Chemical mapping of a 207-nucleotide RNA with 2A3 and DMS. For DMS the reverse transcriptase was MarathonRT. Conditions: 150 mM KOAc, 10 mM MgCl2 and 150 mM bicine (pH 8.5), 24 C. 2A3 adducts were read by reverse transcription with SuperScript II with manganese. It was measured as part of the RMDB library OK3TST.
RNA sequence: GGGAACGACUCGAGUAGAGUCGAAAAGGCGUGGUGGCGGGCGCCUGUAAUCCCAGCUACUACGGAGGCUGAAGCAGGAGAAUCGCUUUAACCUGGGAUGCUAUAACCUGCAGUGAGCCGACACUGUGACACUGCACUCCAGCCUGGGUGACAGAGAACUAUCAGUAAUGUUCGCAUUACUGAUAGUAAAAGAAACAACAACAACAAC
Reactivity to 2A3 in 0.01 (KOAc 150mM, MgCl2 10mM, bicine 150mM(pH8.5), 24C), signal-to-noise 2, nucleotides 027 to 156: g020g000c010g000u010g030g020u010g010g040c040g050g050g000c010g000c020c010u010g050u070a050a060u050c010c000c010a020g040c030u080a050c030u090a070c040g130g020a030g000g000c020u030g030a020a000g010c010a010g010g060a000g090a100a110u150c030g020c070u110u130u120a060a020c000c010u030g040g000g000a040u100g020c030u030a020u080a290a110c000c030u030g000c000a010g020u010g040a040g030c010c000g040a000c020a030c060u110g030u070g070a000c020a010c050u040g010c000a010c010u010c030c000a040g020c040c020u050g000g030g000u050g010a050c030a070g070a010g010a050
Reactivity to DMS in 0.01 (KOAc 150mM, MgCl2 10mM, bicine 150mM(pH8.5), 24C), signal-to-noise 3, nucleotides 027 to 156: g030g020c010g020u010g020g050u000g000g030c000g000g000g000c040g010c020c010u020g000u000a080a110u000c010c030c020a110g000c040u010a070c080u020a100c040g020g020a060g030g040c020u000g020a130a090g050c040a070g040g010a180g000a070a100u000c080g030c030u010u010u000a060a160c110c010u000g000g000g010a090u000g020c060u000a110u010a080a100c070c040u000g000c000a050g000u000g000a120g020c060c060g020a130c030a050c060u010g030u000g000a140c030a140c010u000g010c020a050c010u020c000c030a070g010c020c040u010g000g020g010u000g000a120c080a060g000a250g000a110